This 207-nucleotide RNA was probed chemically with 2A3 and DMS. Conditions: 150 mM KOAc, 10 mM MgCl2 and 150 mM bicine (pH 8.5), 24 C. For DMS the reverse transcriptase was MarathonRT. For 2A3 the reverse transcriptase was SuperScript II with manganese. It was measured as part of the RMDB library OK3TST.

RNA sequence: GGGAACGACUCGAGUAGAGUCGAAAAGAAGUGGAUUGCAGAUGCUAGAUUUGGAGAGAUGCAGUUUGUGCAAAGGAGGGCCUUGAAAAGGCCUUCGAAAUGUGUCUGCCAAGGCUAAAAUAAUCACAUUUUGUAUUUGCACAGCAUUUUCAUUGUAGACGACUACUAAUUUCGAUUAGUAGUCGUCAAAAGAAACAACAACAACAAC
Reactivity to 2A3 in 0.01 (KOAc 150mM, MgCl2 10mM, bicine 150mM(pH8.5), 24C), signal-to-noise 4, nucleotides 027 to 156: g070a050a010g020u020g040g020a060u100u100g020c030a000g020a060u030g020c020u080a040g030a190u080u100u090g030g020a040g000a000g010a010u010g010c000a020g060u130u190u090g010u010g010c010a010a000a000g050g020a010g000g010g010c000c000u020u090g090a100a100a040a040g000g000c000c000u010u000c000g010a000a000a000u010g010u010g000u050c060u040g020c020c030a040a030g060g000c020u100a050a050a070a140u230a050a090u120c000a010c010a050u030u030u030u050g060u030a090u020u000u020g000c010a010c000a010g020c010a030u020u020u080u150c030a040u030u070g020u010a020
Reactivity to DMS in 0.01 (KOAc 150mM, MgCl2 10mM, bicine 150mM(pH8.5), 24C), signal-to-noise 3, nucleotides 027 to 156: g000a110a070g020u010g010g000a120u000u000g010c020a120g010a110u000g010c050u000a080g010a120u010u000u010g030g010a120g010a100g010a020u000g010c040a090g010u010u010u020g010u000g010c020a050a040a100g020g020a070g050g030g030c000c000u000u010g000a090a170a130a140g010g000c010c000u000u000c000g000a010a030a040u000g030u000g010u000c090u000g010c110c070a070a090g040g000c040u000a040a060a050a080u000a080a170u010c040a030c010a050u000u000u000u000g000u010a200u000u000u000g010c020a030c020a090g010c020a100u000u000u000u000c040a170u000u010g020u010a250